[RMDB]
RNA sequence: GGGAACGACUCGAGUAGAGUCGAAAAGAUAUGGAACGAACUACAGCGAAACUGAGCGUUGAAAUCGGAAACGAUGGAGCUCAGUAGUAGCUGCGUUCCUAAGUCAAAACACUCGUUCGCGAGUGAACUAAUGGGAGGACUUCGGUCCUCCCAUUAGAAAAGAAACAACAACAACAAC
Reactivity to 2A3 in 0.01 (KOAc 150mM, MgCl2 10mM, bicine 150mM(pH8.5), 24C), signal-to-noise 1, nucleotides 027 to 126: g010a000u090a030u160g000g000a000a020c000g010a080a040c100u190a090c270a030g000c010g040a010a020a010c000u010g020a000g020c000g140u300u040g000a070a010a040u010c000g030g030a060a060a000c010g010a000u000g060g050a020g000c000u010c040a000g010u010a010g000u000a000g000c000u000g090c000g000u000u000c000c000u010a110a000g050u030c010a000a020a100a070c020a000c000u010c020g050u050u100c250g010c030g100a010g020u020g010a030a040
Reactivity to DMS in 0.01 (KOAc 150mM, MgCl2 10mM, bicine 150mM(pH8.5), 24C), signal-to-noise 2, nucleotides 027 to 126: g000a020u020a300u000g000g010a050a020c010g000a090a100c040u000a300c040a020g000c010g000a150a210a120c010u000g000a030g010c010g020u040u020g000a110a120a030u000c010g000g000a110a010a210c010g020a020u000g000g000a100g040c000u000c000a020g020u000a000g010u000a090g000c000u000g000c010g000u000u000c000c020u000a000a100g000u010c110a090a060a090a180c020a000c000u000c010g010u000u010c190g000c010g000a050g030u000g000a070a160